RNA sequence: GGGAACGACUCGAGUAGAGUCGAAAAGAUAUGGAAUCCUGGUUAACUUGGACCUACGUUCGGAAACGAACGUAGCUAGUUGGACCACAUGGAUUCCUAAGUCAAAGUUGGCUGUUCGCAGCCAACAGUAGCUAUAGCGGUUCGCCGCUAUAGCUACAAAAGAAACAACAACAACAAC
Reactivity to DMS in 0.01 (KOAc 150mM, MgCl2 10mM, bicine 150mM(pH8.5), 24C), signal-to-noise 3, nucleotides 027 to 126: g010a060u000a230u010g000g000a030a010u000c000c020u000g020g030u000u010a010a020c000u000u010g050g010a060c300c000u010a000c000g010u000u000c000g010g010a060a050a080c000g010a000a020c000g010u000a000g000c010u000a010g030u000u000g030g060a010c000c010a180c300a200u040g010g010a050u000u000c000c000u010a040a070g000u000c030a090a080a160g010u000u000g000g010c000u010g010u010u020c220g020c020a010g000c000c000a010a000c000a130
Reactivity to 2A3 in 0.01 (KOAc 150mM, MgCl2 10mM, bicine 150mM(pH8.5), 24C), signal-to-noise 3, nucleotides 027 to 126: g020a030u050a030u120g020g000a020a000u000c010c030u050g060g000u050u070a110a080c030u160u300g130g080a100c040c020u020a000c000g000u000u000c000g020g020a040a040a010c000g000a000a000c000g000u010a010g010c000u010a000g020u020u120g190g050a020c000c040a110c120a300u220g000g000a000u010u000c000c000u020a030a030g010u020c100a170a030a080g000u010u000g000g010c000u030g070u090u150c300g030c160a000g000c000c010a000a000c000a010